[RMDB]
RNA sequence: GGGAACGACUCGAGUAGAGUCGAAAAUGCAGGUUCGCCUGCACAAACCUUUGUGCCUAGCAAGCUUUAAGGACGAGGUCCGACCCAUUGGGUCGGACUCCCCACCGUCUUAAGAGUGAUGACCUAGGCACUCUGGUACACUGAUCGUUCGCGAUCAACGAUAAGUGGGUUUCGACCCACUUAUCGUAAAAGAAACAACAACAACAAC
Reactivity to 2A3 in 0.01 (KOAc 150mM, MgCl2 10mM, bicine 150mM(pH8.5), 24C), signal-to-noise 3, nucleotides 027 to 156: u060g000c010a000g030g020u070u140c180g090c060c000u000g150c010a000c030a020a080a010c000c000u040u000u010g000u010g010c000c000u010a000g050c040a190a150g000c030u090u080u130a100a020g030g020a010c010g010a010g000g000u020c000c010g010a000c010c000c100a270u140u300g030g000g000u020c000g000g000a000c010u020c000c000c000c010a030c000c010g010u000c010u060u040a080a030g040a000g020u070g070a250u120g020a060c020c000u000a010g020g000c000a000c000u000c000u020g000g000u050a060c100a010c060u060g060a000u030c000g040u110u130c250g030c060g140a010u100c030a030
Reactivity to DMS in 0.01 (KOAc 150mM, MgCl2 10mM, bicine 150mM(pH8.5), 24C), signal-to-noise 1, nucleotides 027 to 156: u000g010c000a010g000g020u020u000c300g030c030c000u010g130c040a010c100a050a080a110c010c020u010u000u040g030u000g010c000c030u000a000g000c020a110a300g000c010u000u010u000a210a190g010g000a110c020g000a300g000g010u000c000c000g020a060c000c010c000a300u000u020g100g180g090u000c030g010g040a000c000u000c230c020c030c060a300c140c000g040u020c000u010u000a130a140g000a070g000u000g040a180u000g010a140c300c010u000a000g000g020c040a000c030u010c010u000g000g030u000a040c110a100c110u010g020a000u020c010g000u000u000c300g000c010g030a050u000c010a110
The record gives the reactivity of an RNA of 207 nucleotides to 2A3 and DMS.
Values are in units of 0.01, from 0 to 300, in steps of 10.
For DMS the reverse transcriptase was MarathonRT.
The RNA was probed in 150 mM KOAc, 10 mM MgCl2 and 150 mM bicine (pH 8.5) at 24 C.
High 2A3 reactivity points to a flexible backbone, as in loops and unpaired stretches.